[RMDB]
RNA sequence: GGGAACGACUCGAGUAGAGUCGAAAAGCGUGCGCGGCAAACCGUUCCAUGACCGGAUUGAACAGGCCCAGGGGCAGGACGAACGUCAGGUCCAUGGCGCCCACCAGGGGGUAGGGAACGUUGGUGGUCACUUCUGUUCGUUCGCGAACAGAAGUGAAAAAGAAACAACAACAACAAC
Reactivity to 2A3 in 0.01 (KOAc 150mM, MgCl2 10mM, bicine 150mM(pH8.5), 24C), signal-to-noise 3, nucleotides 027 to 126: g040c020g020u050g000c060g020c040g010g000c020a060a040a060c050c020g010u040u030c020c020a070u090g050a060c010c000g000g030a030u120u120g060a130a060c060a070g020g000c000c000c000a010g010g030g010g050c020a020g020g020a010c000g090a300a080c140g020u040c050a020g000g020u020c000c010a020u000g020g030c030g000c030c010c000a040c030c030a060g040g040g010g000g020u060a090g020g000g030a010a040c060g000u000u090g040g060u030g020g010
Reactivity to DMS in 0.01 (KOAc 150mM, MgCl2 10mM, bicine 150mM(pH8.5), 24C), signal-to-noise 2, nucleotides 027 to 126: g000c050g040u000g000c100g050c080g000g050c060a050a030a030c140c030g030u010u010c000c010a040u020g050a080c060c010g000g000a100u000u000g010a100a120c300a200g000g000c080c010c000a050g000g010g000g000c010a030g020g030a010c000g010a100a130c280g000u000c020a030g000g000u000c010c000a040u000g000g010c130g030c010c000c030a140c150c040a120g010g000g020g030g000u020a080g010g020g000a030a030c090g000u000u030g000g000u000g000g010